[RMDB]
RNA sequence: GGGAACGACUCGAGUAGAGUCGAAAAUAACAAUUGCCUUGCGCAAUGGGGAACGGCCGGAAUUGAAGCAUCUCAGUACGGCCAGGAAGAGAAAUCGAAUGAGACGCCGUUAGUAAUGGCGAAUGAAGCUAUACUCACAGUUCGCUGUGAGUAUAGCAAAAGAAACAACAACAACAAC
Reactivity to DMS in 0.01 (KOAc 150mM, MgCl2 10mM, bicine 150mM(pH8.5), 24C), signal-to-noise 2, nucleotides 027 to 126: u010a080a080c100a090a050u000u000g010c010c020u030u010g010c190g000c030a020a000u000g030g000g020g000a190a230c180g020g020c000c000g010g000a140a030u000u000g020a080a110g010c190a110u000c100u010c020a040g000u000a030c000g010g000c010c000a060g030g020a080a110g000a100g000a050a120a090u000c050g020a070a100u010g000a130g010a200c010g020c010c000g020u000u000a120g000u000a110a050u010g000g000c030g000a030a100u000g010a150a070
Reactivity to 2A3 in 0.01 (KOAc 150mM, MgCl2 10mM, bicine 150mM(pH8.5), 24C), signal-to-noise 2, nucleotides 027 to 126: u130a020a010c030a030a060u000u020g000c000c010u120u200g060c110g000c040a010a030u030g020g000g000g030a000a110c060g010g000c000c000g000g050a100a020u040u030g010a090a040g060c030a150u110c000u010c060a000g010u060a020c000g000g000c000c000a000g040g040a080a090g050a000g020a030a140a010u060c060g030a120a040u140g040a110g000a080c050g000c010c010g050u000u050a090g060u110a040a060u080g000g000c030g010a000a050u050g030a040a000